[RMDB]
RNA sequence: GGGAACGACUCGAGUAGAGUCGAAAAGGCCUCGUGGCUGGCGCGUUCAGCGCAUUUGCCGAGGUAAACCGGCUUGCGGAGGCGGCCAAGGAGGGCGAUCACAGCGGCAGCCGUCGGCCGCAGCGCACAUAUGUUGGCACUUCGGUGCCAACAUAUGAAAAGAAACAACAACAACAAC
Reactivity to DMS in 0.01 (KOAc 150mM, MgCl2 10mM, bicine 150mM(pH8.5), 24C), signal-to-noise 4, nucleotides 027 to 126: g000g020c010c000u000c010g000u020g030g030c020u010g010g000c000g000c010g000u010u010c260a150g000c010g010c010a040u000u000u000g020c000c010g000a020g000g010u000a020a080a200c030c010g020g010c040u010u010g020c010g000g010a290g000g000c010g000g010c010c050a130a150g000g000a100g020g010g010c050g000a090u010c150a100c210a140g000c040g020g020c130a170g010c020c020g020u010c070g010g020c000c010g010c000a030g010c030g010c170a150
Reactivity to 2A3 in 0.01 (KOAc 150mM, MgCl2 10mM, bicine 150mM(pH8.5), 24C), signal-to-noise 3, nucleotides 027 to 126: g060g000c020c000u020c050g120u160g070g000c000u050g030g000c010g010c000g050u300u300c150a070g020c000g000c000a010u200u180u100g000c010c010g020a000g030g010u030a100a020a020c020c010g070g020c060u100u150g000c050g020g030a000g000g050c040g010g000c010c020a060a050g140g020a100g030g100g050c050g010a070u170c100a060c050a260g090c040g110g050c010a010g010c020c000g030u030c010g080g120c000c000g010c010a000g000c020g000c010a040